[RMDB]
RNA sequence: GGGAACGACUCGAGUAGAGUCGAAAACUAUCAAUUGACUAGGAGAAGUGAACGUUCUUUAAGAAUUUGUCAUUUCAAAUUUACGGAACCGCAAGAAACGAUUUGCUUCUUCCUCUAACUGAGUAAUUCGUAUAUUGUGAUUCGUCACAAUAUACGAAAAAGAAACAACAACAACAAC
Reactivity to DMS in 0.01 (KOAc 150mM, MgCl2 10mM, bicine 150mM(pH8.5), 24C), signal-to-noise 4, nucleotides 027 to 126: c030u000a070u010c020a080a080u010u030g020a100c140u010a120g010g000a020g010a010a010g000u000g010a010a020c020g000u000u010c010u020u010u020a110a160g000a020a020u000u000u000g010u000c300a120u000u040u010c020a020a020a030u000u000u000a190c140g000g000a070a090c220c130g030c190a040a000g000a040a020a050c010g010a120u000u000u000g010c010u000u000c000u010u010c000c040u000c060u000a030a050c140u000g000a010g010u000a080a140u000
Reactivity to 2A3 in 0.01 (KOAc 150mM, MgCl2 10mM, bicine 150mM(pH8.5), 24C), signal-to-noise 9, nucleotides 027 to 126: c020u050a050u200c040a110a150u100u160g060a070c050u070a040g000g010a010g000a000a000g000u010g020a010a010c000g010u010u000c020u030u100u090a150a080g040a030a020u010u020u030g040u060c080a140u040u180u100c010a020a020a030u040u050u040a080c060g100g050a070a100c090c060g080c150a000a030g050a060a070a010c070g260a300u000u000u010g000c000u000u000c000u090u040c020c010u010c010u030a060a080c040u040g040a010g090u100a050a120u010